The record gives the reactivity of an RNA of 177 nucleotides to DMS and 2A3. The data come from the RNA Mapping Database (RMDB), library RFMREP. The DMS profile rests on 8,271 reads.

[RMDB]
RNA sequence: GGGAACGACUCGAGUAGAGUCGAAAAUCCACUGCUGCCGCCGUCGCCGCCACCCGAGCCGGAGCGGGCUGGGCCGCCAAGGCAAGAUGGUGGACUACAGCGUGUGGGAAAGCAUCCUUCGGGAUGCGUUGUCUAUCUUGUUCGCAAGAUAGACAACAAAAGAAACAACAACAACAAC
Reactivity to DMS in 0.01 (KOAc 150mM, MgCl2 10mM, bicine 150mM(pH8.5), 24C), signal-to-noise 6, nucleotides 027 to 126: u010c000c000a060c040u000g010c010u000g020c020c030g020c020c010g000u000c050g010c080c090g010c040c060a090c040c010c010g000a130g020c030c020g010g010a210g020c090g010g000g000c110u010g010g000g020c040c080g000c080c110a140a120g000g010c040a160a100g010a020u000g010g010u000g000g010a120c050u010a300c030a010g000c000g000u000g010u000g010g010g010a070a060a170g010c000a000u000c000c000u000u010c180g020g000g000a010u000g010c000
Reactivity to 2A3 in 0.01 (KOAc 150mM, MgCl2 10mM, bicine 150mM(pH8.5), 24C), signal-to-noise 5, nucleotides 027 to 126: u020c000c000a010c010u030g010c010u010g000c000c010g010c010c000g000u010c010g020c060c030g020c020c000a040c000c020c000g080a010g030c030c010g100g080a100g030c120g030g010g000c060u090g010g030g030c030c040g040c040c050a150a050g010g000c020a020a040g010a010u020g000g000u010g010g020a030c030u130a030c030a010g000c050g100u070g010u010g010g030g040a100a120a010g000c000a000u000c000c000u020u050c160g070g000g000a000u000g000c010